RNA sequence: GGGAACGACUCGAGUAGAGUCGAAAAUUAUAAAGUGGAGAACUUCUUCUCUUUUCAACUUACUGAUUAUCUAGGCCAGCAGAAUAAAGUUUUGGGCGUGAUUGACUUUAGUGGACCUGUUGGAGAGGUAUCAACGCAUAUUCGUAUGCGUUGAUACAAAAGAAACAACAACAACAAC
Reactivity to DMS in 0.01 (KOAc 150mM, MgCl2 10mM, bicine 150mM(pH8.5), 24C), signal-to-noise 2, nucleotides 027 to 126: u020u030a080u020a020a040a050g000u000g010g020a080g020a090a150c200u020u000c030u020u010c020u000c020u000u000u000u000c120a060a100c070u010u010a090c140u000g000a080u010u010a070u000c090u000a200g000g020c010c010a020g010c000a020g000a120a100u000a030a030a030g020u000u000u000u000g000g000g040c070g040u000g020a100u000u000g000a020c020u000u000u000a050g010u010g010g010a050c190c020u000g020u000u000g000g010a050g020a040g000